[RMDB]
RNA sequence: GGGAACGACUCGAGUAGAGUCGAAAAUGGUCCAAGAGCGUUGAUGAUGUAAAGGCUAAAGGCUGAGCUCAUUUGGCAAUGCAGAGAGAGGACAGUCCUUGCGGUGGAGUGGGAAGAAGGGGCCACAGUCAUUCUUGGCUUUGGCCUCUUGGUAGCACUUAGCGAGAGUAUUCGUACUCUCGCUAAGAAAAGAAACAACAACAACAAC
Reactivity to 2A3 in 0.01 (KOAc 150mM, MgCl2 10mM, bicine 150mM(pH8.5), 24C), signal-to-noise 2, nucleotides 027 to 156: u060g030g020u100c050c010a060a040g070a010g030c050g000u080u120g060a140u000g000a030u100g040u140a090a160a040g040g000c040u060a080a040a060g100g000c030u040g010a000g040c030u010c060a080u050u050u070g010g000c070a030a090u150g060c060a000g040a010g020a000g010a010g080g000a010c010a020g030u060c020c030u060u060g040c060g020g000u120g110g020a170g020u090g020g000g010a040a020g090a030a030g040g000g010g000c010c000a020c020a000g000u010c000a050u230u060c110u170u110g000g000c000u000u140u000g000g000c020c150u200c020u000u000g000g000u000a000g000c010a000
Reactivity to DMS in 0.01 (KOAc 150mM, MgCl2 10mM, bicine 150mM(pH8.5), 24C), signal-to-noise 2, nucleotides 027 to 156: u010g030g020u000c020c020a100a180g010a100g040c020g010u000u010g030a070u010g010a070u010g000u000a050a110a150g020g030c030u000a120a090a080g010g010c010u030g020a150g010c030u000c060a100u010u000u000g020g020c060a090a080u000g040c040a090g010a160g000a110g000a070g020g010a070c040a080g020u000c040c030u000u000g010c090g000g000u000g000g000a110g010u000g000g040g020a060a090g010a070a070g020g020g250g000c010c000a000c040a010g020u000c010a050u000u010c200u020u010g020g010c000u000u000u000g010g030c010c000u000c020u000u000g000g000u010a100g030c080a180
About this RNA
Conditions: 150 mM KOAc, 10 mM MgCl2 and 150 mM bicine (pH 8.5), 24 C. Chemical mapping of a 207-nucleotide RNA with 2A3 and DMS. For 2A3 the reverse transcriptase was SuperScript II with manganese.